[RMDB]
RNA sequence: GGGAACGACUCGAGUAGAGUCGAAAAGAUAUGGACAGGCUACCCACCGCUCAUUUGCGAAGAACCUUCGUAAUAUCGGAAACGAUAUUACGAAGGGGAGCAAAGGAAGCGAGGCCUGUCCUAAGUCCGUUUUAAUAUACUUCGGUAUAUUAAAACGAAAAGAAACAACAACAACAAC
Reactivity to DMS in 0.01 (KOAc 150mM, MgCl2 10mM, bicine 150mM(pH8.5), 24C), signal-to-noise 5, nucleotides 027 to 126: g000a160u010a160u000g000g020a010c000a010g020g030c010u010a140c020c010c010a300c100c010g000c010u020c020a240u000u000u010g000c000g000a160a210g010a200a170c000c000u010u000c000g020u000a000a000u000a000u000c000g000g000a120a110a230c010g000a010u010a000u000u000a000c000g000a010a000g000g000g000g000a070g020c000a000a000a030g000g020a120a060g000c010g010a090g010g000c000c000u000g000u000c000c000u000a010a120g010u010c110
Reactivity to 2A3 in 0.01 (KOAc 150mM, MgCl2 10mM, bicine 150mM(pH8.5), 24C), signal-to-noise 2, nucleotides 027 to 126: g060a100u300a230u300g010g000a000c010a010g000g000c020u120a300c040c000c000a010c020c030g030c000u000c010a120u030u000u000g030c030g090a300a020g010a110a090c000c000u000u000c010g020u000a000a000u000a000u000c020g020g030a090a080a020c010g010a000u000a000u010u000a000c000g000a000a000g000g010g000g000a020g000c010a030a000a000g080g050a220a020g020c010g010a000g010g000c000c000u000g000u020c000c000u000a010a000g060u090c030

The data come from the RNA Mapping Database (RMDB), library TTRINS. This 177-nucleotide RNA was probed chemically with DMS and 2A3. The RNA was probed in 150 mM KOAc, 10 mM MgCl2 and 150 mM bicine (pH 8.5) at 24 C. The DMS profile rests on 6,044 reads.